[RMDB]
RNA sequence: GGGAACGACUCGAGUAGAGUCGAAAAGAUAUGGAUGGAGCUGAACAAGACUAUUAAAUCGGAAACGAUUUAACGAAUCUUGUACAGCGUUGAAAUCCUAAGUCAAACCCUACCUUCGGGUAGGGAAGCUAACAAAUAACUUCGGUUAUUUGUUAGCAAAAGAAACAACAACAACAAC
Reactivity to DMS in 0.01 (KOAc 150mM, MgCl2 10mM, bicine 150mM(pH8.5), 24C), signal-to-noise 6, nucleotides 027 to 126: g000a040u000a300u010g000g000a010u000g000g010a160g020c000u000g000a100a020c000a000a000g010a020c070u010a270u000u000a000a010a000u010c000g000g000a130a100a170c000g010a000u000u000u000a000a020c070g000a080a090u000c000u000u000g010u000a110c000a010g000c000g010u000u010g000a100a110a040u000c000c000u000a050a120g000u000c030a150a120a150c000c000c000u000a010c010c000u000u000c210g010g010g020u000a000g000g010g000a010a020
Reactivity to 2A3 in 0.01 (KOAc 150mM, MgCl2 10mM, bicine 150mM(pH8.5), 24C), signal-to-noise 5, nucleotides 027 to 126: g020a020u070a020u130g000g000a010u010g010g030a030g000c000u000g010a010a000c000a010a000g000a010c030u010a030u060u010a010a010a010u010c010g020g020a050a040a050c000g000a000u020u010u010a020a000c030g100a150a300u000c000u000u000g000u020a030c000a000g000c000g000u040u020g010a020a020a000u010c000c000u020a120a010g050u030c040a050a030a300c010c000c000u000a000c000c000u030u080c300g170g000g000u000a000g000g000g000a000a010

The record gives the reactivity of an RNA of 177 nucleotides to DMS and 2A3. 2A3 adducts were read by reverse transcription with SuperScript II with manganese. The 2A3 profile rests on 16,306 reads. High 2A3 reactivity points to a flexible backbone, as in loops and unpaired stretches. For DMS the reverse transcriptase was MarathonRT.